[RMDB]
RNA sequence: GGGAACGACUCGAGUAGAGUCGAAAAAAGCGACAGUACGCUGCAUGGCUGAGCGCCUGCAGAGCUCCGCGCUGCACCGGCCGGUGCGCGGCGGCAGGGCCUCCGAGCUCUACAUCUCCCUGCGGCCACCAUGGUUAUAUUUCGAUAUAACCAUGGUAAAAGAAACAACAACAACAAC
Reactivity to DMS in 0.01 (KOAc 150mM, MgCl2 10mM, bicine 150mM(pH8.5), 24C), signal-to-noise 7, nucleotides 027 to 126: a080a100g010c030g010a110c120a050g010u000a070c140g000c020u000g020c020a030u010g030g020c020u000g010a130g030c170g000c010c010u000g000c010a020g010a080g010c020u000c050c070g000c020g000c030u000g030c040a100c070c050g010g010c100c100g020g030u010g020c060g010c120g020g010c060g010g020c080a030g010g010g010c110c040u010c120c120g010a070g010c030u000c030u000a030c080a070u010c090u000c000c010c010u000g020c030g000g010c050c080
Reactivity to 2A3 in 0.01 (KOAc 150mM, MgCl2 10mM, bicine 150mM(pH8.5), 24C), signal-to-noise 4, nucleotides 027 to 126: a000a000g070c040g070a070c060a040g060u110a030c070g000c020u010g000c020a120u230g020g000c030u120g120a140g160c090g020c000c010u010g000c020a010g000a010g040c010u010c020c010g000c010g000c070u110g000c010a030c030c000g120g110c070c090g030g010u050g010c100g000c050g080g010c000g040g000c020a020g010g030g000c000c020u040c060c070g020a040g000c010u020c030u040a030c030a120u050c050u040c030c010c000u040g050c040g040g030c010c010

Structure probing data (DMS and 2A3) for a 177-nucleotide construct.
The RNA was probed in 150 mM KOAc, 10 mM MgCl2 and 150 mM bicine (pH 8.5) at 24 C.
The data come from the RNA Mapping Database (RMDB), library OK2TST.
DMS (dimethyl sulfate) methylates the pairing face of unpaired adenines and cytosines.